[RMDB]
RNA sequence: GGGAACGACUCGAGUAGAGUCGAAAAAAUUGGAUAUGAGUUCAAGUAUAGGUACCCUUGUGGCGUCCAAUGAGUCAAUUGCUCAUCUAUAAACUUGUAAGAAAUGUUGAGGUACGAGUUAAGAGUUGUCAAUAUUUACAAAAUCAUCUUCCAACAGAUCCAGAUAAGUGUUCGCACUUAUCUGGAUAAAAGAAACAACAACAACAAC
Reactivity to 2A3 in 0.01 (KOAc 150mM, MgCl2 10mM, bicine 150mM(pH8.5), 24C), signal-to-noise 3, nucleotides 027 to 156: a020a010u100u040g010g000a040u040a050u060g020a020g070u100u040c030a060a010g000u040a080u080a100g040g020u120a060c020c020c000u050u100g130u120g050g010c040g050u000c040c020a010a050u030g000a000g030u080c120a110a130u130u220g020c030u010c020a050u010c010u020a080u150a090a100a060c010u030u050g040u080a040a090g040a110a050a020u040g000u020u030g020a010g020g050u040a020c040g000a040g060u070u100a110a030g060a030g020u040u020g020u010c010a020a010u020a090u070u110u060a100c080a080a130a090a010u010c010a010u000c090u040u000c010c010a040a020c030a120g090
Reactivity to DMS in 0.01 (KOAc 150mM, MgCl2 10mM, bicine 150mM(pH8.5), 24C), signal-to-noise 2, nucleotides 027 to 156: a060a120u010u000g020g000a110u000a100u000g000a130g000u000u000c020a030a100g000u000a070u000a070g010g010u000a050c010c010c010u000u000g000u000g010g030c020g010u000c010c080a140a060u020g000a010g020u000c010a150a120u010u010g010c000u010c000a050u000c080u000a120u000a110a050a040c010u000u010g010u000a110a150g020a060a050a050u000g030u000u000g000a160g000g030u000a040c040g000a170g030u000u000a050a110g010a300g030u000u000g000u000c020a040a120u020a080u080u000u000a140c050a060a060a060a200u000c030a060u000c080u010u000c010c020a040a060c070a140g000
The record gives the reactivity of an RNA of 207 nucleotides to 2A3 and DMS. For 2A3, 1,407 sequencing reads were counted. The reactions ran in a buffer of 150 mM KOAc, 10 mM MgCl2 and 150 mM bicine (pH 8.5), at 24 C.